[RMDB]
RNA sequence: GGGAACGACUCGAGUAGAGUCGAAAAGCUCUGCGAGACAGAUUGAACAACAAAGAGAGAUCGAAAAUCUUAGAGGAGAGAACGAAUCUGUCGACUUCACUAGGACAUUGUCGAUCAGAGGUCCAAAGACCAAGGAUGGGUUCGCCUAUCUUUGGUCAAAAGAAACAACAACAACAAC
Reactivity to 2A3 in 0.01 (KOAc 150mM, MgCl2 10mM, bicine 150mM(pH8.5), 24C), signal-to-noise 9, nucleotides 027 to 126: g030c000u000c000u010g020c030g020a030g010a020c010a020g020a020u030u030g030a070a030c020a050a020c040a030a300a010g080a020g010a000g010a020u020c020g070a050a030a020a070u010c010u020u030a030g010a030g040g010a010g010a010g030a060a030c020g030a050a120u150c120u140g080u030c020g060a120c000u020u020c010a010c040u020a010g000g020a010c020a140u080u130g030u020c000g000a020u020c010a000g020a010g040g030u000c010c000a030a050a020
Reactivity to DMS in 0.01 (KOAc 150mM, MgCl2 10mM, bicine 150mM(pH8.5), 24C), signal-to-noise 9, nucleotides 027 to 126: g010c020u000c000u000g000c060g010a240g000a030c040a070g000a030u000u000g000a240a190c060a090a110c180a080a130a110g010a070g010a210g000a010u010c010g000a100a060a110a180u000c010u000u000a020g000a080g000g010a030g000a110g010a140a030c040g000a090a070u050c120u020g000u000c010g000a300c010u000u000c010a070c010u000a010g000g000a030c130a090u030u020g000u000c010g000a190u010c010a050g000a030g000g010u010c020c020a050a100a110

The data come from the RNA Mapping Database (RMDB), library OK1LIB.
An RNA of 177 nucleotides, treated with 2A3 and DMS and read out base by base.
The RNA was probed in 150 mM KOAc, 10 mM MgCl2 and 150 mM bicine (pH 8.5) at 24 C.
The DMS profile rests on 38,205 reads.